[RMDB]
RNA sequence: GGGAACGACUCGAGUAGAGUCGAAAACGAAUGAUGGCGAUAGUUUCCUGAACACGCUGGUAGUAAAACGGUUUGAUGACUGUUUCAGACAGGCGCAGCAGAUCGUUACGCUUAAUCAUUUCACUCAAAUAUCUGCAUGGUUCGCCAUGCAGAUAUUAAAAGAAACAACAACAACAAC
Reactivity to DMS in 0.01 (KOAc 150mM, MgCl2 10mM, bicine 150mM(pH8.5), 24C), signal-to-noise 3, nucleotides 027 to 126: c140g010a050a030u010g010a050u000g010g000c030g060a130u000a060g020u000u000u010c100c100u000g020a070a090c080a130c040g010c030u000g010g000u000a030g010u010a040a100a040a010c030g010g010u000u000u000g000a070u010g000a060c030u000g010u000u000u000c230a160g010a030c000a040g000g000c110g020c050a090g000c050a020g010a010u000c050g040u000u000a090c180g020c010u000u000a170a060u000c030a030u000u000u000c080a160c070u000c100a050
Reactivity to 2A3 in 0.01 (KOAc 150mM, MgCl2 10mM, bicine 150mM(pH8.5), 24C), signal-to-noise 3, nucleotides 027 to 126: c040g020a040a050u010g020a010u100g020g000c000g050a050u020a150g060u040u020u110c000c070u060g080a050a010c040a010c070g000c020u040g130g080u040a020g020u020a070a190a000a030c020g000g080u010u030u090g130a070u070g010a030c000u000g140u000u100u240c120a080g020a100c000a020g050g000c150g000c160a010g000c000a000g000a040u020c000g020u010u030a040c070g000c020u050u120a050a010u050c030a040u010u080u140c060a090c050u060c030a020

The record gives the reactivity of an RNA of 177 nucleotides to DMS and 2A3. For DMS, 2,673 sequencing reads were counted. The RNA was probed in 150 mM KOAc, 10 mM MgCl2 and 150 mM bicine (pH 8.5) at 24 C.